Source: RMDB library OK3TST, as collected in RNAgym. An RNA of 207 nucleotides, treated with DMS and 2A3 and read out base by base.

RNA sequence: GGGAACGACUCGAGUAGAGUCGAAAAGGCGAUCGAGAGGCCCUCUCAUUAAUGCGGAGGUGUCACGCUGACAGAAUGAUAUUAGAUGUCCGCUUCCGGUUGCAUCGCGGCGAUGAUUACAUAGGACAUCGAUUACCCAUUAGCUUCGGGGAAGCCAAAUAAUUACCAGCUUCGGCUGGUAAUUAUUAAAAGAAACAACAACAACAAC
Reactivity to DMS in 0.01 (KOAc 150mM, MgCl2 10mM, bicine 150mM(pH8.5), 24C), signal-to-noise 2, nucleotides 027 to 156: g020g020c030g020a070u000c050g000a140g020a110g050g000c010c010c000u010c030u000c030a200u010u000a090a150u010g010c120g000g000a080g040g020u000g020u010c020a080c050g000c060u010g000a140c040a150g000a120a070u000g000a130u000a100u000u030a080g000a080u000g000u000c010c010g010c130u020u010c050c100g030g020u000u000g010c020a090u010c070g030c090g010g000c060g020a070u010g010a110u010u010a040c060a120u010a070g020g010a040c010a060u000c000g010a070u000u000a060c030c020c020a110u010u000a110g000c070u000u000c060g000g000g010g010a070a130g000c010c020a070
Reactivity to 2A3 in 0.01 (KOAc 150mM, MgCl2 10mM, bicine 150mM(pH8.5), 24C), signal-to-noise 3, nucleotides 027 to 156: g010g020c010g040a060u030c090g030a080g020a050g160g000c010c010c000u000c010u000c000a120u130u300a190a130u130g080c060g050g000a020g010g030u130g000u060c030a020c070g000c030u020g010a020c020a040g150a100a090u120g080a050u070a130u170u210a090g000a010u020g000u000c000c000g000c030u080u010c050c000g050g000u010u060g020c040a040u070c080g020c090g120g060c060g020a030u060g000a040u060u210a080c060a110u180a160g030g000a010c000a000u000c000g000a010u010u050a060c010c000c010a020u020u070a030g070c050u060u070c090g040g020g000g020a030a000g020c000c010a010

For DMS the reverse transcriptase was MarathonRT. For 2A3 the reverse transcriptase was SuperScript II with manganese. The reactions ran in a buffer of 150 mM KOAc, 10 mM MgCl2 and 150 mM bicine (pH 8.5), at 24 C.